[RMDB]
RNA sequence: GGGAACGACUCGAGUAGAGUCGAAAAGGAGGUGCUAAACUUUGUCUUACAGGGUUAUUGUAAUAAUUAGAGAUAAUGUCUAUAGAGUAGCCAACAUAGUGAGUGGCACAUUUAUGUGCUCAGAAAAUGGUGGUUGCUGCUACCAUCAUCAUCACCAGAUAUCCUACGGAUUCGUCCGUAGGAUAUCAAAAGAAACAACAACAACAAC
Reactivity to DMS in 0.01 (KOAc 150mM, MgCl2 10mM, bicine 150mM(pH8.5), 24C), signal-to-noise 2, nucleotides 027 to 156: g010g010a090g020g020u010g020c040u010a030a090a080c040u000u000u020g010u010c040u000u000a140c050a130g000g000g020u000u000a080u000u010g010u010a050a110u000a060a110u000u000a090g000a180g010a080u010a050a040u040g000u000c050u000a080u000a120g010a060g030u010a050g030c010c000a010a050c030a060u000a100g000u000g010a110g000u000g010g000c030a010c040a070u000u000u000a100u020g040u000g000c010u000c070a130g000a030a100a070a030u000g020g020u010g000g030u000u000g000c040u010g010c060u010a090c020c020a020u000c030a040u000c040a070u000c030a050c080c050a210
Reactivity to 2A3 in 0.01 (KOAc 150mM, MgCl2 10mM, bicine 150mM(pH8.5), 24C), signal-to-noise 5, nucleotides 027 to 156: g030g000a020g010g020u030g030c020u050a040a030a060c030u140u040u080g020u030c030u050u090a020c060a040g030g020g030u080u080a110u130u110g040u060a090a100u070a100a070u160u090a020g010a010g020a070u060a090a060u110g030u020c030u060a060u030a040g040a020g060u060a010g010c010c000a010a020c020a060u060a040g030u030g100a040g010u190g010g050c020a000c000a010u100u160u100a180u140g010u010g000c020u030c080a020g080a040a100a020a020u030g000g010u010g000g000u040u040g010c030u030g020c010u050a020c020c000a010u030c000a010u020c000a010u080c010a020c170c040a010
Background:
The record gives the reactivity of an RNA of 207 nucleotides to DMS and 2A3. 2A3 adducts were read by reverse transcription with SuperScript II with manganese. The DMS profile rests on 4,697 reads. It was measured as part of the RMDB library OK3TST. DMS adducts were read by reverse transcription with MarathonRT.